[RMDB]
RNA sequence: GGGAACGACUCGAGUAGAGUCGAAAACAGAUCCAAAUUACGUUCACGACCUCGAUGAUGUUCGCCCGGAGCUGUUCACACAGAUCCUCGUGGACGGAGAAACUGAGUUCGUACCGGAUUUGAGGAAAAGCUCCGAUGUGUUCGCACAUCGGAGCUUAAAAGAAACAACAACAACAAC
Reactivity to 2A3 in 0.01 (KOAc 150mM, MgCl2 10mM, bicine 150mM(pH8.5), 24C), signal-to-noise 1, nucleotides 027 to 126: c010a020g090a100u070c010c000a020a030a070u070u010a160c010g000u010u000c170a000c030g000a000c000c000u030c030g020a070u020g040a040u080g040u000u030c030g000c000c000c000g000g000a000g050c000u000g020u290u210c100a030c000a000c000a110g010a040u000c000c000u000c030g000u050g000g000a040c000g000g000a080g200a040a150a000c120u080g030a000g010u020u000c010g020u020a070c000c060g020g030a010u000u000u000g150a120g110g040a170a000